[RMDB]
RNA sequence: GGGAACGACUCGAGUAGAGUCGAAAAUCCUAAGUCAAGCUAAGACAGAUCCGUGGACGCGCAGAUAAUAUCGGAAACGAUAUUGUAGCGUCCGAACGGAUCAAUGACGGCUUGAUAUGGAAAAAGAAGCCAGCUUGGUUCGCCAAGCUGGCUUCAAUCGAUACUACACGUUCGCGUGUAGUAUCGAAAAAGAAACAACAACAACAAC
Reactivity to 2A3 in 0.01 (KOAc 150mM, MgCl2 10mM, bicine 150mM(pH8.5), 24C), signal-to-noise 1, nucleotides 027 to 156: u010c020c010u010a150a010g050u030c000a000a000g010c040u080a130a090g030a060c030a030g000a060u010c010c000g010u010g020g010a000c010g050c000g000c100a000g020a200u040a060a010u000a030u000c020g010g080a000a050a060c010g000a000u000a000u020u010g010u000a060g000c000g000u020c000c030g000a010a000c030g000g000a000u000c000a010a000u030g020a000c030g000g000c010u010u000g000a000u010a060u050g070g020a140a160a000a050a060g080a000a010g260c060c010a000g290c000u020u000g000g000u070u200c270g040c090c000a000a010g000c010u000g000g000c010u000u000c000a000a000
Reactivity to DMS in 0.01 (KOAc 150mM, MgCl2 10mM, bicine 150mM(pH8.5), 24C), signal-to-noise 1, nucleotides 027 to 156: u000c010c000u000a090a300g010u000c000a020a000g060c040u010a120a280g020a250c040a120g000a000u010c030c010g040u010g020g010a030c000g030c000g010c140a170g020a110u010a000a030u000a000u000c000g030g010a250a160a230c030g020a000u010a000u000u010g030u000a190g020c000g010u000c010c020g000a060a030c010g070g010a010u000c010a100a070u010g000a090c160g030g010c020u030u000g010a100u000a260u000g020g010a110a120a190a130a160g010a020a000g030c000c000a030g020c010u000u000g050g030u000u010c300g030c000c040a010a010g070c010u000g000g020c010u000u000c010a020a020
Chemical mapping of a 207-nucleotide RNA with 2A3 and DMS. The RNA was probed in 150 mM KOAc, 10 mM MgCl2 and 150 mM bicine (pH 8.5) at 24 C. 2A3 adducts were read by reverse transcription with SuperScript II with manganese. The 2A3 profile rests on 844 reads. High DMS reactivity at an A or C suggests that its Watson-Crick edge is free.